RNA sequence: GGGAACGACUCGAGUAGAGUCGAAAAUUUCAUUUGUUACAUAUUUAUUGGGUUAUUUCCUUUAUGCUAGGAACUUUAUUAGUAUAAGGAUACAGAUAAGGUCCAUUCUCUGUUCUCAAGAAUCUGAGUCUACAGGCAGAAGACAAAAUGCAGUACAUGGUAUAAUGCGAUUCGUCGCAUUAUACCAAAAAGAAACAACAACAACAAC
Reactivity to DMS in 0.01 (KOAc 150mM, MgCl2 10mM, bicine 150mM(pH8.5), 24C), signal-to-noise 2, nucleotides 027 to 156: u000u000u000c060a120u010u010u010g050u020u000a070c020a110u000a110u000u000u000a100u020u010g010g000g040u010u010a080u000u000u020c010c000u000u000u010a040u020g030c020u000a090g020g020a080a120c070u000u010u010a000u000u000a110g010u000a050u000a100a080g020g000a260u010a070c050a180g000a060u010a060a030g010g030u010c010c010a100u010u000c020u010c030u010g020u010u010c110u010c050a050a150g030a100a110u000c090u020g020a080g020u000c000u010a070c090a070g010g040c070a060g010a080a070g000a110c060a050a080a020a130u010g040c010a110g000u010a080c090a190
Reactivity to 2A3 in 0.01 (KOAc 150mM, MgCl2 10mM, bicine 150mM(pH8.5), 24C), signal-to-noise 2, nucleotides 027 to 156: u030u000u020c040a060u080u060u150g010u120u110a060c030a030u170a080u170u170u080a050u090u070g020g020g050u090u010a070u030u050u110c020c000u090u110u030a050u020g000c020u020a010g060g000a080a060c000u130u160u040a120u060u060a130g010u060a050u020a060a050g000g000a000u020a040c030a020g020a020u040a150a020g040g030u000c010c010a050u160u040c020u000c010u020g010u050u040c050u040c060a040a050g080a120a080u070c030u040g030a020g050u060c040u080a070c020a020g000g120c010a000g020a060a020g050a070c020a000a130a020a000u110g000c110a020g080u270a050c030a050